[RMDB]
RNA sequence: GGGAACGACUCGAGUAGAGUCGAAAAGUGGCAGCAACUACAGCAAGGGACCUGCCCUCUGGAAUUCAAGGCAGAGACUGCACACAUCCGGAAUGAUCCCUCAUGGAAGGUCGCGGCUCCCCCCCCCCACGAAAGCUUAAUUCGUUAAGCUUUCGUGAAAAGAAACAACAACAACAAC
Reactivity to DMS in 0.01 (KOAc 150mM, MgCl2 10mM, bicine 150mM(pH8.5), 24C), signal-to-noise 4, nucleotides 027 to 126: g020u000g000g020c010a020g010c040a070a070c080u000a100c080a090g010c070a100a100g020g020g020a130c190c010u000g000c020c010c020u000c000u000g000g010a090a120u010u010c070a030a120g000g000c020a030g010a090g000a110c030u000g010c030a070c060a080c090a110u000c020c020g000g000a090a070u000g000a100u010c020c010c010u000c060a110u000g010g010a090a070g010g000u000c040g010c060g000g000c030u000c000c000c000c000c000c000c000c000c000
Reactivity to 2A3 in 0.01 (KOAc 150mM, MgCl2 10mM, bicine 150mM(pH8.5), 24C), signal-to-noise 2, nucleotides 027 to 126: g050u060g020g030c020a010g000c010a060a040c000u100a050c050a050g050c020a090a090g010g000g040a020c000c010u020g000c000c000c000u060c020u000g190g080a290a290u210u100c010a120a080g010g050c020a000g010a050g020a130c020u040g000c020a010c000a010c000a180u070c000c050g040g030a070a090u080g030a060u060c020c020c020u000c000a050u090g100g030a070a070g010g010u050c030g000c040g050g030c000u070c010c000c000c000c000c000c000c000c000
Chemical mapping of a 177-nucleotide RNA with DMS and 2A3. Values cover nucleotides 27 to 126. The DMS profile rests on 5,851 reads. For 2A3 the reverse transcriptase was SuperScript II with manganese. For 2A3, 1,574 sequencing reads were counted. The data come from the RNA Mapping Database (RMDB), library OK2TST.